[RMDB]
Conditions: 150 mM KOAc, 10 mM MgCl2 and 150 mM bicine (pH 8.5), 24 C.
An RNA of 207 nucleotides, treated with DMS and 2A3 and read out base by base.
Reactivities are given for positions 27 through 156.
For DMS the reverse transcriptase was MarathonRT.
RNA sequence: GGGAACGACUCGAGUAGAGUCGAAAAACAGAAAAAAGGAGUUUAAAUUAGAUUUGCAAACGGACGGUACUAAAUAACGUCACUUUUACGUCUAACUUAUCGUUAACUCUGCAAAAAGAAAACAAGAAAAACAAGCGUGAGUUCGCUCACGCUUGAACAAUUGUAAAUUCUUCGGAAUUUACAAUUGAAAAGAAACAACAACAACAAC
Reactivity to DMS in 0.01 (KOAc 150mM, MgCl2 10mM, bicine 150mM(pH8.5), 24C), signal-to-noise 1, nucleotides 027 to 156: a130c040a210g020a020a070a070a180a080a140g000g040a040g030u050u010u000a030a000a030u010u000a060g000a060u010u000u000g040c050a030a000a060c060g000g030a010c010g000g000u010a190c080u000a080a030a300u000a010a050c030g000u000c010a040c030u000u030u000u000a000c010g030u000c010u000a000a000c040u010u000a070u010c120g030u000u000a040a040c010u000c040u000g030c080a050a000a110a120a070g000a060a060a120a120c080a040a110g000a060a030a090a110a140c000a010a050g000c010g050u000g000a030g010u000u010c300g030c000u000c000a000c000g000c010u050u000g000a040a080
Reactivity to 2A3 in 0.01 (KOAc 150mM, MgCl2 10mM, bicine 150mM(pH8.5), 24C), signal-to-noise 2, nucleotides 027 to 156: a000c010a040g160a030a040a000a010a000a030g030g020a010g000u140u090u090a050a070a080u050u040a020g030a020u040u060u190g040c060a060a040a010c030g010g030a000c000g020g060u110a040c070u260a140a100a170u120a080a020c010g000u010c040a160c110u030u080u000u070a020c040g000u000c010u010a000a040c020u080u060a050u130c000g060u020u050a010a020c020u010c000u040g000c060a040a020a070a020a030g090a030a060a010a010c100a080a080g130a150a070a030a030a010c000a000a020g000c000g000u010g000a000g010u020u090c120g040c060u000c000a000c000g000c000u000u000g000a000a000